[RMDB]
The data come from the RNA Mapping Database (RMDB), library OK3TST. The record gives the reactivity of an RNA of 207 nucleotides to 2A3. Conditions: 150 mM KOAc, 10 mM MgCl2 and 150 mM bicine (pH 8.5), 24 C.
RNA sequence: GGGAACGACUCGAGUAGAGUCGAAAACCUUCCGUCCCAGCUUCGUCAUGUCCUUAUCUGUUACGACCACGGUUAUUAGUCAAACGCGGACGCAGAAUAUAAAUGGCUGCGAACGCACGUUCGAGACGGGAGAUAGUAUGCGCUUUCGAUCUAGGUGCCACCUCCCAUGGUUCGCCAUGGGAGGUGGAAAAGAAACAACAACAACAAC
Reactivity to 2A3 in 0.01 (KOAc 150mM, MgCl2 10mM, bicine 150mM(pH8.5), 24C), signal-to-noise 1, nucleotides 027 to 156: c000c000u000u000c000c040g000u000c000c090c030a040g040c030u020u000c020g150u040c000a070u010g210u290c000c000u080u040a100u080c130u080g010u190u100a110c070g060a080c000c040a000c120g070g070u140u050a020u050u080a090g190u110c090a160a000a000c060g050c000g070g000a120c040g020c000a040g050a110a000u210a000u050a200a300a030u300g120g000c000u000g000c030g000a130a040c020g090c000a000c000g040u030u100c050g000a000g000a150c030g000g000g000a000g000a030u040a040g110u130a000u110g180c080g000c000u010u220u000c000g050a050u060c040u080a000g070g000u180g040

Reactivities are given for positions 27 through 156.